About this RNA
Chemical mapping of a 177-nucleotide RNA with DMS and 2A3. Conditions: 150 mM KOAc, 10 mM MgCl2 and 150 mM bicine (pH 8.5), 24 C. The DMS profile rests on 1,450 reads. Source: RMDB library OK2TRN, as collected in RNAgym.
[RMDB]
RNA sequence: GGGAACGACUCGAGUAGAGUCGAAAAACGGAUAACUGCGCGUUCAGCAUCUACCUCGUGCCAGCCAUAUACUCCGUGCGGAUCGUGGUACUGGCAGAUUUUGAGGGCGUGGAGGACAUCAGGAUGGCAAGGCGGAUCAAUUCGUUGAUCCGCCUUGAAAAGAAACAACAACAACAAC
Reactivity to DMS in 0.01 (KOAc 150mM, MgCl2 10mM, bicine 150mM(pH8.5), 24C), signal-to-noise 2, nucleotides 027 to 126: a090c090g000g000a070u010a110a150c050u000g000c040g020c020g020u010u000c040a080g020c060a010u000c060u010a140c000c010u000c150g010u000g030c020c000a030g030c000c030a080u010a080u000a130c120u030c050c020g000u010g010c100g010g020a060u000c160g000u000g000g010u010a020c020u020g000g010c010a070g000a020u000u000u000u000g010a100g050g000g000c070g030u010g010g020a090g000g020a070c140a030u000c030a050g030g000a130u000g020g010
Reactivity to 2A3 in 0.01 (KOAc 150mM, MgCl2 10mM, bicine 150mM(pH8.5), 24C), signal-to-noise 1, nucleotides 027 to 126: a020c020g040g000a050u050a110a190c020u070g040c040g030c010g300u040u090c020a010g010c020a090u000c060u150a130c040c000u060c040g070u050g010c000c010a000g010c010c010a030u050a010u040a150c080u000c000c060g100u210g170c150g110g000a000u010c070g050u000g000g030u010a090c060u000g020g000c020a020g010a090u080u160u080u100g040a070g000g130g000c000g000u040g020g050a040g050g070a000c010a040u040c000a060g110g030a100u110g020g000